[RMDB]
RNA sequence: GGGAACGACUCGAGUAGAGUCGAAAAUGUAAUUUAGGGGGCGCUGUUUGUAGGAAGCAUGCUACAGAGUACAGAGAGUAUAUGGAAGCAUAUAAUCUUGUCUCUGCAUCAGGUUUCCGCCUUUGGUCAUACGCAAUAUCUUCGGAUAUUGCGUAUGAAAAGAAACAACAACAACAAC
Reactivity to 2A3 in 0.01 (KOAc 150mM, MgCl2 10mM, bicine 150mM(pH8.5), 24C), signal-to-noise 2, nucleotides 027 to 126: u030g000u040a000a130u030u070u290a130g040g030g000g020g000c020g010c020u050g040u090u120u080g040u040a050g000g010a000a000g010c000a000u010g000c000u010a010c010a010g000a000g000u090a020c020a010g150a000g010a000g050u020a010u000a010u010g010g020a030a020g080c000a000u000a000u000a010a010u000c000u000u020g020u000c000u000c000u000g000c000a020u010c000a000g000g020u000u000u010c010c000g010c000c000u110u040u100g090g000u020
Reactivity to DMS in 0.01 (KOAc 150mM, MgCl2 10mM, bicine 150mM(pH8.5), 24C), signal-to-noise 1, nucleotides 027 to 126: u000g020u010a080a080u010u010u010a130g010g000g010g000g030c120g030c070u020g010u000u000u000g020u010a160g020g000a010a010g020c010a050u000g000c050u000a040c000a000g000a010g000u020a010c000a060g010a020g000a030g010u010a010u000a010u000g000g010a170a110g010c010a010u000a010u000a010a060u000c000u000u010g010u000c000u000c000u000g010c030a010u010c010a010g000g000u000u000u000c000c010g020c110c050u000u000u010g020g010u010